Structure probing data (2A3 and DMS) for a 177-nucleotide construct.
For DMS the reverse transcriptase was MarathonRT.
2A3 adducts were read by reverse transcription with SuperScript II with manganese.
The reactions ran in a buffer of 150 mM KOAc, 10 mM MgCl2 and 150 mM bicine (pH 8.5), at 24 C.
In probing experiments dimethyl sulfate is read out at A N1 and C N3, which are open when not base-paired.

RNA sequence: GGGAACGACUCGAGUAGAGUCGAAAAGAUAUGGAAGGUAUGGAGCUGACAUCGGAAACGAUGUACAGCGUUGAAAUACUUCCUAAGUCAAAACCCGAAAUAUGGAGUUCGCUCCAUAUUUCGGGAACAAUAAGUCACUCUUCGGAGUGACUUAUUGAAAAGAAACAACAACAACAAC
Reactivity to 2A3 in 0.01 (KOAc 150mM, MgCl2 10mM, bicine 150mM(pH8.5), 24C), signal-to-noise 3, nucleotides 027 to 126: g010a010u030a000u050g030g000a010a050g260g110u120a010u020g000g030a010g000c000u000g000a010c000a010u000c000g000g000a020a000a010c010g000a010u010g010u080a230c010a010g010c000g000u000u010g000a000a000a000u010a000c000u010u000c000c000u000a030a010g020u010c020a010a050a140a300c010c010c010g000a000a000a010u010a010u000g010g000a010g040u060u150c200g080c160u000c010c000a010u000a000u010u000u000c000g000g010g000a000a000
Reactivity to DMS in 0.01 (KOAc 150mM, MgCl2 10mM, bicine 150mM(pH8.5), 24C), signal-to-noise 4, nucleotides 027 to 126: g000a010u000a100u000g000g000a030a070g000g000u000a000u000g000g000a070g030c000u000g000a060c000a000u000c000g020g000a040a020a060c010g020a010u000g000u000a110c010a000g000c000g020u000u010g000a070a130a020u000a020c000u010u000c000c000u010a020a120g000u000c020a130a060a130a160c010c000c000g000a010a010a000u000a010u000g000g000a020g020u000u010c300g010c000u000c000c000a000u000a000u000u000u000c000g000g000g010a000a020